This 177-nucleotide RNA was probed chemically with DMS and 2A3. The reactions ran in a buffer of 150 mM KOAc, 10 mM MgCl2 and 150 mM bicine (pH 8.5), at 24 C. 2A3 adducts were read by reverse transcription with SuperScript II with manganese. Source: RMDB library OK2TRN, as collected in RNAgym.

[RMDB]
RNA sequence: GGGAACGACUCGAGUAGAGUCGAAAACGCCAAAGCGGACAGUGUGGCGCGUCGUAGCUGCCAGACUGCGCUAUAUCACAUCGCAGAAGCGCUGGUGCGCUGGAUGGCACCAAUCCUCUCCUUCACCCAACAGUGGACCGUUCGCGGUCCACUGUUGAAAAGAAACAACAACAACAAC
Reactivity to DMS in 0.01 (KOAc 150mM, MgCl2 10mM, bicine 150mM(pH8.5), 24C), signal-to-noise 2, nucleotides 027 to 126: c110g020c000c000a090a230a170g000c040g010g030a120c050a020g010u000g000u010g000g010c020g020c030g050u000c230g070u000a120g010c030u020g030c020c030a130g020a070c020u000g020c040g010c050u000a080u010a110u010c110a080c140a070u000c050g010c030a060g020a240a130g000c040g030c090u000g010g000u000g000c040g010c050u010g000g020a060u000g000g030c000a060c020c070a080a100u010c070c020u010c020u000c020c000u000u000c060a120c120c050
Reactivity to 2A3 in 0.01 (KOAc 150mM, MgCl2 10mM, bicine 150mM(pH8.5), 24C), signal-to-noise 2, nucleotides 027 to 126: c070g030c010c000a050a070a020g010c060g060g030a070c040a100g020u050g020u050g130g030c020g000c020g080u050c030g140u150a050g020c100u120g000c020c020a040g010a040c030u070g010c010g000c000u020a030u010a010u160c100a050c010a060u060c030g010c050a020g040a150a010g100c020g000c100u050g080g000u110g000c080g000c040u140g080g070a140u120g040g030c000a010c020c000a010a050u040c000c020u050c060u060c000c000u070u050c040a060c050c020